[RMDB]
RNA sequence: GGGAACGACUCGAGUAGAGUCGAAAAAGAUAUGACAGUUUGACGCUGGCGCUGGAGUCAGAACGUUCACUGCGUCAGCAGCAUGAUGUGGAGAUGGCCCAGCUGAAAGAGCGUCUUGCGGCCGCUGCUCCUCCUCCCCAUUCGUGGGGAGGAGGAGAAAAGAAACAACAACAACAAC
Reactivity to 2A3 in 0.01 (KOAc 150mM, MgCl2 10mM, bicine 150mM(pH8.5), 24C), signal-to-noise 1, nucleotides 027 to 126: a040g030a030u200a070u180g120a020c070a000g100u120u070u010g010a000c020g070c000u000g030g030c030g040c000u000g000g020a050g040u110c080a030g100a180a060c090g000u110u070c010a010c090u000g040c020g020u060c040a000g000c010a000g000c000a020u080g000a010u130g050u150g100g040a160g010a280u040g020g000c000c000c000a000g070c000u080g090a180a130a080g130a020g010c000g030u030c000u000u000g020c000g000g000c000c000g000c000u070g000

Structure probing data (2A3) for a 177-nucleotide construct.
The reactions ran in a buffer of 150 mM KOAc, 10 mM MgCl2 and 150 mM bicine (pH 8.5), at 24 C.